Structure probing data (2A3) for a 177-nucleotide construct.
The reactions ran in a buffer of 150 mM KOAc, 10 mM MgCl2 and 150 mM bicine (pH 8.5), at 24 C.
RNA sequence: GGGAACGACUCGAGUAGAGUCGAAAAGGCAGUUUAGAAAGAGUCUCUCAAAAACUUUAGAAGAAUCCUUCUACAACUCAGAGAUCCACGGGAUUAGUCGGAUGACCCAGACACCUCAGAGGGUUGGAGAGUGUUCCUUGUUCGCAAGGAACACUCUAAAAGAAACAACAACAACAAC
Reactivity to 2A3 in 0.01 (KOAc 150mM, MgCl2 10mM, bicine 150mM(pH8.5), 24C), signal-to-noise 2, nucleotides 027 to 126: g090g050c040a050g020u010u080u090a040g070a000a070a000g010a010g070u060c000u000c000u080c080a060a060a000a080a180c110u180u230u160a040g000a070a000g000a000a120u040c000c020u000u000c030u010a030c130a090a030c050u050c140a010g040a000g010a090u050c020c000a030c070g150g070g000a010u030u090a090g070u060c050g040g020a010u100g000a030c000c000c000a000g000a020c040a050c000c020u010c010a020g130a060g110g020g000u060u000g010g100